[RMDB]
Source: RMDB library M2RFPK, as collected in RNAgym. Chemical mapping of a 207-nucleotide RNA with 2A3 and DMS. The reactions ran in a buffer of 150 mM KOAc, 10 mM MgCl2 and 150 mM bicine (pH 8.5), at 24 C.
RNA sequence: GGGAACGACUCGAGUAGAGUCGAAAAGAUUCCUCGUUGUUGAGCGAGGUUUAAAUAAAUCGACCACACAAACGUAGAGCCGACUACGGAUUUAUAAAUUAAGGCAUUAAGUGUGAUAAGGAGACAAAAAACGAUGUUGUGUUCGCACAACAUCGAAGGAGAUACAAUGGUUCGCCAUUGUAUCUCCAAAAGAAACAACAACAACAAC
Reactivity to 2A3 in 0.01 (KOAc 150mM, MgCl2 10mM, bicine 150mM(pH8.5), 24C), signal-to-noise 4, nucleotides 027 to 156: g050a140u150u070c000c000u010c000g000u000u010g010u020u020g010a000g000c010g010a000g040g000u060u130u060a010a020a000u190a000a000a020u010c000g010a000c000c010a010c000a000c000a020a110a020c000g000u000a000g000a000g000c030c000g050a020c020u000a000c010g010g000a000u020u280u040a200u130a120a050a010u120u140a000a000g010g000c010a020u150u160a130a080g000u000g000u010g030a000u060a020a040g140g020a050g040a070c130a050a170a030a000a010a020c040g000a010u000g000u010u000g010u010g010u060u050c140g050c060a000c000a000a000c000a000u000c000g000a000a000
Reactivity to DMS in 0.01 (KOAc 150mM, MgCl2 10mM, bicine 150mM(pH8.5), 24C), signal-to-noise 2, nucleotides 027 to 156: g010a260u000u000c020c000u000c000g020u000u000g020u010u010g000a220g040c030g000a030g010g040u000u010u010a050a010a080u000a020a070a120u010c020g040a110c020c010a000c010a090c010a270a110a210c020g020u000a090g000a250g050c020c060g010a080c020u010a030c000g000g000a230u040u000u000a040u000a020a070a050u000u010a070a070g020g000c030a280u000u000a040a170g030u000g030u000g010a080u010a040a120g000g010a220g000a080c110a000a020a060a080a100a150c000g000a020u000g020u000u000g040u000g000u020u000c290g020c010a030c000a010a030c000a010u000c000g010a040a110